Source: RMDB library OK1LIB, as collected in RNAgym. An RNA of 177 nucleotides, treated with 2A3 and DMS and read out base by base. For DMS, 3,159 sequencing reads were counted. For 2A3, 2,971 sequencing reads were counted.
RNA sequence: GGGAACGACUCGAGUAGAGUCGAAAAUGCGGAUGAUUUCGGCUUCGGGCCCGCCGUGGCUGGCGAUCACAAUCGCAGUUGGCAAGGCGUCGGUGUCGGCCGGAUCGGUGUCGCGGCGCGCGUCGUAGAACUAUUCUCCGUUCGCGGAGAAUAGUUCAAAAGAAACAACAACAACAAC
Reactivity to 2A3 in 0.01 (KOAc 150mM, MgCl2 10mM, bicine 150mM(pH8.5), 24C), signal-to-noise 4, nucleotides 027 to 126: u130g000c030g050g010a040u070g010a020u060u080u180c010g000g010c030u150u100c030g070g030g000c030c000c020g030c010c000g040u090g050g030c000u050g080g090c010g010a000u060c110a040c090a280a020u030c030g000c030a030g060u130u120g080g030c090a080a120g010g000c020g030u120c090g050g030u110g070u140c020g010g000c020c000g000g010a000u030c010g010g020u080g040u030c020g000c000g040g000c010g010c000g010c000g040u100c010g000u020a040
Reactivity to DMS in 0.01 (KOAc 150mM, MgCl2 10mM, bicine 150mM(pH8.5), 24C), signal-to-noise 2, nucleotides 027 to 126: u040g040c010g030g000a090u000g010a050u010u000u010c010g000g040c030u050u060c050g010g020g040c060c040c050g010c010c000g030u010g020g000c020u020g010g020c000g020a010u010c230a150c300a030a090u030c000g000c010a060g040u030u040g000g000c050a120a040g000g000c000g020u010c080g000g010u020g020u030c030g000g000c030c000g040g000a040u000c000g050g010u000g000u020c060g000c050g000g020c010g000c090g000c000g010u010c030g020u050a100

The reactions ran in a buffer of 150 mM KOAc, 10 mM MgCl2 and 150 mM bicine (pH 8.5), at 24 C. Reactivities are rounded to 0.1 and cut off at 0 and 3.